Description:
This 177-nucleotide RNA was probed chemically with 2A3 and DMS. For DMS the reverse transcriptase was MarathonRT. Conditions: 150 mM KOAc, 10 mM MgCl2 and 150 mM bicine (pH 8.5), 24 C. Source: RMDB library M2PK90, as collected in RNAgym.
RNA sequence: GGGAACGACUCGAGUAGAGUCGAAAAAAUUUUUUCGGUCUCGUCAGACAAUUCAGUGACAUGAUGGUCAUAGCGAAAGCACACGCACGAAAUGUCACUGAUGAAAAAGUGCGUGUGACCAAUUUAAGUACUUGUACUGUUUCGACAGUACAAGUACAAAAGAAACAACAACAACAAC
Reactivity to 2A3 in 0.01 (KOAc 150mM, MgCl2 10mM, bicine 150mM(pH8.5), 24C), signal-to-noise 3, nucleotides 027 to 126: a010a000u100u060u010u020u000u010c010g000g010u000c010u020c040g120u100c100a020g010a040c010a020a030u030u010c010a000g000u010g000a000c020a040u170g030a110u120g140g010u030c060a110u260a060g010c020g040a100a030a000g000c000a000c000a000c010g010c000a020c070g090a170a120a080u020g000u010c000a000c010u000g010a000u010g000a020a030a000a000a000g010u000g000c000g000u020g040u000g000a000c010c000a030a050u130u160u100a170a010
Reactivity to DMS in 0.01 (KOAc 150mM, MgCl2 10mM, bicine 150mM(pH8.5), 24C), signal-to-noise 3, nucleotides 027 to 126: a040a030u010u000u010u000u010u000c020g020g020u010c010u000c220g020u020c190a100g000a020c030a220a050u000u000c000a020g000u010g010a010c010a070u010g000a130u020g010g000u000c010a070u010a090g010c010g010a070a040a090g010c010a180c050a000c000g010c000a010c090g000a060a080a040u000g000u000c000a000c000u000g000a020u000g000a030a030a060a040a060g020u000g000c000g000u000g010u000g000a020c030c010a050a100u010u000u010a070a170